[RMDB]
RNA sequence: GGGAACGACUCGAGUAGAGUCGAAAAGAUAUGGACUCGCGGGAGCUAUGUAUCGGAAACGAUAUUUAGCAUCGAUCGGAGUCCUAAGUCAAACACGAUCAAGGGCGUUCGCGCCCUUGAUCGUGAAGCAAAGUCAAUAGUUCGCUAUUGACUUUGCAAAAGAAACAACAACAACAAC
Reactivity to 2A3 in 0.01 (KOAc 150mM, MgCl2 10mM, bicine 150mM(pH8.5), 24C), signal-to-noise 1, nucleotides 027 to 126: g030a000u070a020u120g000g000a020c000u020c000g300c060g070g050g010a030g000c000u000a010u050g030u000a000u010c010g030g000a060a040a030c000g010a000u000a010u020u040u010a030g020c030a300u110c030g080a090u080c020g040g000a000g010u050c000c000u000a020a010g000u030c020a010a110a070c010a010c000g000a000u000c000a000a000g000g010g050c050g120u140u140c290g060c020g020c110c030c000u030u000g000a000u000c000g000u020g000a000a010
Reactivity to DMS in 0.01 (KOAc 150mM, MgCl2 10mM, bicine 150mM(pH8.5), 24C), signal-to-noise 2, nucleotides 027 to 126: g000a040u010a300u010g000g010a010c000u000c010g010c000g000g000g000a050g010c000u000a020u000g000u000a000u010c000g010g000a090a040a140c000g010a010u000a020u000u000u000a010g010c000a210u000c040g020a050u000c000g010g000a020g010u000c000c000u010a010a050g010u000c040a150a140a280c000a000c000g020a010u000c000a000a000g020g020g020c000g020u000u000c210g010c050g010c000c010c000u010u010g000a000u000c010g000u000g000a010a140